[RMDB]
RNA sequence: GGGAACGACUCGAGUAGAGUCGAAAACGUCGAUCUGAGUGGUGGAAUCAGGAUCAGCAGCCACGAGACGCUCCGUAAACUCACCAGCAACAAGCUCAAUGCCAUCAGCUACGACAGCAUCUCCACGACUUAGACCGGGAUUCGUCCCGGUCUAAGUAAAAGAAACAACAACAACAAC
Reactivity to DMS in 0.01 (KOAc 150mM, MgCl2 10mM, bicine 150mM(pH8.5), 24C), signal-to-noise 2, nucleotides 027 to 126: c090g020u010c030g000a120u010c050u010g010a120g030u000g010g020u000g000g000a110a120u000c100a100g010g000a040u000c050a120g000c070a190g000c030c040a100c040g010a120g020a130c080g030c070u010c050c040g010u020a040a080a110c080u000c060a090c050c030a080g000c050a100a080c120a050a050g010c010u000c090a080a080u000g010c050c030a040u000c060a060g000c000u010a040c080g010a040c100a040g000c040a080u000c010u000c000c030a070c220g000
The data come from the RNA Mapping Database (RMDB), library OK2TST. Structure probing data (DMS) for a 177-nucleotide construct. For DMS the reverse transcriptase was MarathonRT. The reactions ran in a buffer of 150 mM KOAc, 10 mM MgCl2 and 150 mM bicine (pH 8.5), at 24 C.